[RMDB]
RNA sequence: GGGAACGACUCGAGUAGAGUCGAAAAGAUGCUUUCGAGCAUCACCUCUCCUAAGUCCUUCGCGUUUGACGCAAGCGGGAGGCUGCCAUCGGAAACGAUGGGAGCCGAGGAUCGCUUGCCGAGCGAAGGAUAUGGACUAGACAGACUUCGGUCUGAACUUGAAAGAUGCUUUCGAGCAUCUUUCAAGAAAAGAAACAACAACAACAAC
Reactivity to 2A3 in 0.01 (KOAc 150mM, MgCl2 10mM, bicine 150mM(pH8.5), 24C), signal-to-noise 3, nucleotides 027 to 156: g000a000u020g000c030u090u110u300c270g120a010g020c000a000u000c000a040c010c000u070c030u000c000c010u050a150a070g020u000c000c000u020u000c000g020c010g190u130u180u260g140a130c060g000c000a000a000g000c000g000g030g000a020g000g000c000u070g090c030c000a000u000c000g000g060a080a050a030c010g010a020u000g000g000g020a000g000c010c000g010a090g030g000a010u010c000g000c000u000u000g010c000c000g030a020g000c000g000a000a000g010g000a000u000a000u010g000g000a020c090u090a070g050a110c010a000g010a000c020u060u060c300g110g000u030c010u010g020a030a050
Reactivity to DMS in 0.01 (KOAc 150mM, MgCl2 10mM, bicine 150mM(pH8.5), 24C), signal-to-noise 1, nucleotides 027 to 156: g000a040u000g000c010u000u000u000c160g000a070g000c030a020u000c000a090c060c030u000c060u000c010c010u020a060a240g000u000c010c010u000u000c010g060c010g000u010u000u020g020a210c130g030c000a060a000g000c040g000g000g000a160g020g010c000u000g000c060c000a050u020c000g030g000a210a140a300c030g000a010u020g000g020g000a020g020c000c030g000a060g000g030a080u000c000g010c020u000u000g010c080c000g030a130g020c020g000a020a020g000g000a050u000a010u020g010g020a100c030u000a120g010a210c010a040g000a080c020u010u060c260g070g000u000c020u020g000a040a150
Chemical mapping of a 207-nucleotide RNA with 2A3 and DMS. Values cover nucleotides 27 to 156. For 2A3 the reverse transcriptase was SuperScript II with manganese.